[RMDB]
RNA sequence: GGGAACGACUCGAGUAGAGUCGAAAACGUGCUAGGAUCCAUGGUACAUCGGUACAGUACAUGGUACUAGCUAGCUAGCUCUCUACGGAUCGCACGCUAGUGCUACUAGAGUACCGUCUAGUGAUCCAACGUGCCUAUAAUUCGUUAUAGGCACGUUAAAAGAAACAACAACAACAAC
Reactivity to 2A3 in 0.01 (KOAc 150mM, MgCl2 10mM, bicine 150mM(pH8.5), 24C), signal-to-noise 9, nucleotides 027 to 126: c040g080u100g010c020u040a040g020g040a110u090c020c010a040u080g110g000u130a060c040a120u120c120g130g010u060a040c020a050g040u030a020c010a040u040g020g000u010a040c020u010a020g020c000u000a010g000c010u030a010g000c000u010c000u000c030u090a050c130g070g040a090u100c060g010c020a020c020g060c110u100a040g010u010g040c010u010a030c010u020a020g010a010g050u020a050c030c030g010u020c010u010a040g010u040g060a030u020c010c010
Reactivity to DMS in 0.01 (KOAc 150mM, MgCl2 10mM, bicine 150mM(pH8.5), 24C), signal-to-noise 9, nucleotides 027 to 126: c120g020u000g010c030u000a020g010g000a130u010c010c020a040u000g010g020u000a030c050a100u000c070g010g010u000a020c070a100g010u000a130c130a070u000g000g010u000a130c040u000a030g010c020u000a090g020c040u010a080g010c090u000c040u000c060u000a100c180g010g000a070u010c150g010c030a050c140g010c120u000a060g010u000g010c040u000a080c030u000a050g000a040g000u000a020c060c060g010u000c030u000a040g010u010g000a060u010c030c030